Conditions: 150 mM KOAc, 10 mM MgCl2 and 150 mM bicine (pH 8.5), 24 C. An RNA of 177 nucleotides, treated with 2A3 and DMS and read out base by base. The 2A3 profile rests on 1,125 reads. The DMS profile rests on 1,388 reads.
RNA sequence: GGGAACGACUCGAGUAGAGUCGAAAAUGCAAACUCCUUGGUCACACACACAUACGGCGCGGAAGGCGUGUUUGCUGACGUUUCCAUUCCCUUGUUUCAAUCAUUGGUUAAUCCCUUGAUUCCUUUGCGAUUAUUACCGGUUCGCCGGUAAUAAUCGAAAAGAAACAACAACAACAAC
Reactivity to 2A3 in 0.01 (KOAc 150mM, MgCl2 10mM, bicine 150mM(pH8.5), 24C), signal-to-noise 1, nucleotides 027 to 126: u110g020c020a050a000a140c060u040c040c000u040u030g030g000u080c050a000c000a010c020a010c000a000c000a070u110a210c110g000g000c000g000c030g080g090a070a020g040g010c090g010u110g090u040u010u060g010c000u020g020a020c040g000u030u010u050c010c010a000u040u000c020c010c030u050u060g070u010u060u050c040a030a040u010c010a030u050u050g030g000u050u080a130a060u120c030c010c000u000u080g030a030u130u080c000c000u060u010u200g030
Reactivity to DMS in 0.01 (KOAc 150mM, MgCl2 10mM, bicine 150mM(pH8.5), 24C), signal-to-noise 2, nucleotides 027 to 126: u020g040c110a050a090a120c100u010c040c000u000u010g020g000u010c040a070c000a080c080a100c110a080c130a090u010a080c140g030g020c050g000c050g020g010a060a110g030g020c120g000u000g010u000u000u000g010c020u040g000a170c060g010u010u010u000c000c020a210u010u010c000c000c010u000u000g010u000u000u000c080a080a080u010c020a030u000u000g020g000u020u000a130a110u000c070c020c020u000u000g000a130u000u000c070c050u000u000u010g030